[RMDB]
This 177-nucleotide RNA was probed chemically with DMS and 2A3. Conditions: 150 mM KOAc, 10 mM MgCl2 and 150 mM bicine (pH 8.5), 24 C. DMS adducts were read by reverse transcription with MarathonRT.
RNA sequence: GGGAACGACUCGAGUAGAGUCGAAAAGAGGAUUCAACGAGCUUCGUAGCAACGAUAGCAACGUAGCUUUUGCUACGACCCAAGCUAUCGAGGGUAGCUACGUCCCCUGCUCGAGGGAAGAAUCCGACCGUGGAGUACUAUUCGUAGUACUCCACGGAAAAGAAACAACAACAACAAC
Reactivity to DMS in 0.01 (KOAc 150mM, MgCl2 10mM, bicine 150mM(pH8.5), 24C), signal-to-noise 3, nucleotides 027 to 126: g020a200g000g020a040u000u000c030a080a190c030g000a020g010c040u020u010c030g020u000a020g010c010a120a200c020g000a010u000a010g010c000a070a130c010g010u000a000g020c000u010u010u000u000g010c020u000a040c000g000a090c100c120c220a150a160g000c010u000a000u000c000g000a090g000g010g010u010a140g010c010u000a020c010g010u000c050c000c020c100u010g000c020u000c000g010a130g020g010g020a090a090g000a020a000u000c010c000g030a100
Reactivity to 2A3 in 0.01 (KOAc 150mM, MgCl2 10mM, bicine 150mM(pH8.5), 24C), signal-to-noise 2, nucleotides 027 to 126: g150a020g000g000a000u000u010c010a040a070c070g020a020g000c060u100u100c050g010u010a010g000c020a060a020c020g000a000u010a020g020c020a020a040c010g010u000a010g010c000u140u160u190u300g000c000u020a080c010g100a090c010c020c010a020a030g000c020u000a000u020c000g000a090g000g170g120u140a140g000c010u010a000c020g050u070c000c020c020c000u040g000c000u020c020g020a040g000g100g050a100a150g010a000a000u030c010c010g000a000